[RMDB]
RNA sequence: GGGAACGACUCGAGUAGAGUCGAAAACCGUUGCCGUUCGCGGCAACGGGAAGCAAGCAAGCAGCGCAACGUGACAAGACGAUAAUGAGAUCGCGCAUGCUGAAAAGCCACGCUUCGGCGUGGCUAACCUGGCAACAUUAUUCGUAAUGUUGCCAGGAAAAGAAACAACAACAACAAC
Reactivity to DMS in 0.01 (KOAc 150mM, MgCl2 10mM, bicine 150mM(pH8.5), 24C), signal-to-noise 2, nucleotides 027 to 126: c010c000g020u000u000g010c000c000g020u000u000c280g030c020g010g020c000a000a000c010g010g010g010a040a130g000c160a150a110g020c160a110a020g000c020a050g020c020g000c020a060a190c020g020u000g000a140c130a060a150g020a100c040g020a070u030a100a140u050g000a130g000a050u000c050g010c000g000c040a050u000g000c000u000g000a070a050a120a060g000c000c000a010c030g010c000u010u000c180g010g000c010g010u000g010g000c000u000a000a030
Reactivity to 2A3 in 0.01 (KOAc 150mM, MgCl2 10mM, bicine 150mM(pH8.5), 24C), signal-to-noise 2, nucleotides 027 to 126: c000c000g000u000u000g010c000c010g020u050u050c300g040c030g040g000c000a010a000c010g000g010g000a010a020g080c090a080a050g000c020a060a000g020c000a010g000c000g000c000a010a050c050g030u060g120a200c080a120a080g080a040c080g060a070u080a280a130u290g120a070g030a160u070c000g000c010g010c040a070u050g030c020u030g000a090a080a040a000g020c000c000a000c000g030c000u060u060c160g090g000c000g030u000g000g000c000u000a010a010